RNA sequence: GGGAACGACUCGAGUAGAGUCGAAAAAAUACAAUAUCCGCAGGUAAUUGGGGCAACAUUUGUUGCAGCACUUUAAUGGUGGCCGGAUGCGGGUGUCCAAUCGCAAUAGCCGAGCCAUUACGGCGCGGAAACACCUAUGGUUCGCCAUAGGUGUUUCAAAAGAAACAACAACAACAAC
Reactivity to DMS in 0.01 (KOAc 150mM, MgCl2 10mM, bicine 150mM(pH8.5), 24C), signal-to-noise 4, nucleotides 027 to 126: a070a040u010a080c110a120a080u000a060u000c010c020g020c040a060g000g030u010a070a090u000u010g010g000g010g010c020a020a030c030a240u010u020u000g020u000u010g000c010a080g010c020a030c050u000u000u000a050a060u000g000g020u000g010g020c020c020g010g020a120u000g010c020g010g010g010u000g010u000c070c070a100a060u010c060g000c050a070a130u010a200g010c000c000g010a120g000c000c010a030u000u000a080c070g010g020c030g010c090g000
Reactivity to 2A3 in 0.01 (KOAc 150mM, MgCl2 10mM, bicine 150mM(pH8.5), 24C), signal-to-noise 2, nucleotides 027 to 126: a000a000u300a040c090a060a070u100a030u140c020c030g000c050a020g000g120u130a110a070u120u160g070g050g040g000c020a020a000c030a080u130u140u300g020u000u020g000c010a010g040c000a010c030u140u080u060a140a040u160g070g020u030g070g000c020c020g040g030a020u070g000c000g000g010g000u030g040u000c020c010a020a050u080c050g000c020a020a150u050a140g020c000c000g010a000g000c020c000a020u060u030a030c030g000g000c030g000c010g060